Background
An RNA of 177 nucleotides, treated with 2A3 and DMS and read out base by base. 2A3 adducts were read by reverse transcription with SuperScript II with manganese. DMS adducts were read by reverse transcription with MarathonRT. For DMS, 41,091 sequencing reads were counted.
RNA sequence: GGGAACGACUCGAGUAGAGUCGAAAAUUUCCCUUUGUUUUCGCUGGCUUACAGAUUGACUGGGUCCAAUUAGUUCGUCUUUUAAUCUGGGGGUGAAUUUGACUUUUGUUAGGGCGGAAAACAAGGGCGAUAAGUUUACAUUCGUGUAAAUUUAUCGAAAAGAAACAACAACAACAAC
Reactivity to 2A3 in 0.01 (KOAc 150mM, MgCl2 10mM, bicine 150mM(pH8.5), 24C), signal-to-noise 9, nucleotides 027 to 126: u050u040u070c000c000c000u010u030u020g000u000u000u000u000c010g010c030u040g150g040c010u030u040a020c020a040g060a230u130u100g070a120c070u110g030g000g020u010c020c020a060a060u050u030a090g080u060u030c020g100u030c040u040u160u040u110a070a130u060c060u070g040g010g010g000g010u030g030a020a030u040u020u050g030a030c000u020u060u090u060g020u020u020a020g000g030g030c040g020g020a000a010a010a020c010a000a000g010g010g010
Reactivity to DMS in 0.01 (KOAc 150mM, MgCl2 10mM, bicine 150mM(pH8.5), 24C), signal-to-noise 7, nucleotides 027 to 126: u020u010u010c000c000c000u000u000u000g010u000u000u000u000c010g010c020u010g010g020c020u000u030a060c040a030g000a050u010u000g000a030c020u000g000g010g010u010c040c030a100a130u030u030a090g010u010u010c040g010u020c000u000u000u000u010a020a050u010c040u010g000g000g000g010g020u010g010a060a080u030u020u020g000a060c050u010u010u010u030g010u010u010a060g000g000g010c030g000g000a020a010a020a020c020a020a020g000g010g000